RNA sequence: GGGAACGACUCGAGUAGAGUCGAAAAAGACCACCUCUACGGAGGUGGUCAAGUCACGUAGCUAGUACCAGGUUGCAAUACUAGAGCGUUAGUCCUGGGGCGUACGAUGGCAGUACGCUGCCACCGAUAAAACUUGAAUACUUCGGUAUUCAAGUAAGUUAACUUACAGCUUCGGCUGUAAGUUAACAAAAGAAACAACAACAACAAC
Reactivity to DMS in 0.01 (KOAc 150mM, MgCl2 10mM, bicine 150mM(pH8.5), 24C), signal-to-noise 1, nucleotides 027 to 156: a110g020a080c010c000a000c010c000u010c010u020a150c300g060g010a050g020g050u000g000g040u000c000a000a010g010u000c080a230c050g000u000a050g000c000u010a080g030u010a010c020c010a060g010g010u000u000g020c030a100a060u000a050c020u010a070g010a300g000c010g030u010u000a050g020u000c000c040u000g010g050g020g040c120g070u010a090c000g040a040u000g000g000c040a050g030u000a050c260g060c000u000g030c010c000a010c020c030g010a100u000a000a070a070a080c000u000u010g010a010a010u000a020c000u010u030c300g010g000u000a010u000u010c000a000a010g010u000a010a040
Reactivity to 2A3 in 0.01 (KOAc 150mM, MgCl2 10mM, bicine 150mM(pH8.5), 24C), signal-to-noise 2, nucleotides 027 to 156: a000g000a000c000c000a000c020c000u000c010u020a070c300g110g000a000g030g000u000g030g020u000c000a010a000g010u000c010a000c000g010u020a020g110c000u020a000g010u050a180c020c020a000g010g000u010u020g000c000a010a020u010a030c000u000a030g000a000g030c110g110u140u140a010g010u060c000c000u000g000g000g020g030c100g000u090a060c020g010a010u050g010g000c020a010g010u030a030c200g010c060u000g020c000c000a040c010c030g040a020u110a130a100a030a030c000u000u010g000a010a000u000a000c000u020u010c110g080g000u000a000u000u000c010a000a010g020u010a020a010

An RNA of 207 nucleotides, treated with DMS and 2A3 and read out base by base. High 2A3 reactivity points to a flexible backbone, as in loops and unpaired stretches. The reactions ran in a buffer of 150 mM KOAc, 10 mM MgCl2 and 150 mM bicine (pH 8.5), at 24 C. Reactivities are given for positions 27 through 156. For 2A3 the reverse transcriptase was SuperScript II with manganese.